[RMDB]
RNA sequence: GGGAACGACUCGAGUAGAGUCGAAAAGAUAUGGAUCUAAAAACGCCAAAUCUAAGCACGAUAAGAAGACUUCGGAAACGAAGUUCUUCUUUUGACGUGCUGUUUGGCGUUUUUAGAUCCUAAGUCAGAGGUGACUUAAGUUCGCUUAAGUCACCUCAAAAGAAACAACAACAACAAC
Reactivity to DMS in 0.01 (KOAc 150mM, MgCl2 10mM, bicine 150mM(pH8.5), 24C), signal-to-noise 1, nucleotides 027 to 126: g010a060u000a300u000g010g010a000u000c040u000a000a000a000a000a050c010g020c000c010a010a010a030u010c280u000a110a030g020c000a000c010g030a280u000a020a020g000a010a010g000a040c000u000u010c000g020g000a170a130a140c000g020a000a020g000u000u000c000u000u000c000u000u020u000u000g000a170c140g020u010g000c000u000g010u000u000u000g000g000c010g000u000u000u000u000u000a000g020a000u000c000c010u010a010a060g000u000c060a160